[RMDB]
RNA sequence: GGGAACGACUCGAGUAGAGUCGAAAAUAUCCAACCAUGGCCAUCGCCCUCCCGGAGCUGGAAGAUCAGCGCAUCCAGUUGCUGACCCAAGGCUGGUGGUUCAACACCUGGUGGAGGCACAAGCUGAAAACAGACAAACAUUCGUGUUUGUCUGUUUAAAAGAAACAACAACAACAAC
Reactivity to DMS in 0.01 (KOAc 150mM, MgCl2 10mM, bicine 150mM(pH8.5), 24C), signal-to-noise 6, nucleotides 027 to 126: u010a080u010c020c030a070a120c100c060a090u010g010g000c020c030a060u000c090g020c160c010c040u010c030c020c060g000g020a080g010c010u000g000g010a080a160g000a070u010c010a020g000c030g010c150a120u020c110c120a110g010u000u010g020c020u010g010a080c030c000c020a120a190g000g000c020u000g010g030u000g010g020u010u010c170a060a120c090a090c030c020u000g010g020u000g020g010a120g000g000c060a060c110a100a120g000c020u010g010a090
Reactivity to 2A3 in 0.01 (KOAc 150mM, MgCl2 10mM, bicine 150mM(pH8.5), 24C), signal-to-noise 3, nucleotides 027 to 126: u130a060u020c020c010a000a070c060c010a140u140g040g000c010c010a060u060c080g030c020c000c030u020c010c000c000g010g030a000g000c000u000g010g020a030a020g020a090u020c020a010g000c010g010c030a040u100c100c030a060g030u150u140g080c010u020g030a050c000c030c020a040a010g020g000c010u020g030g020u020g010g000u110u100c060a100a050c020a040c030c020u050g110g010u170g010g030a000g030g000c020a030c030a100a040g040c030u050g080a040
This 177-nucleotide RNA was probed chemically with DMS and 2A3. It was measured as part of the RMDB library OK2TST. Reactivities are rounded to 0.1 and cut off at 0 and 3. The reactions ran in a buffer of 150 mM KOAc, 10 mM MgCl2 and 150 mM bicine (pH 8.5), at 24 C.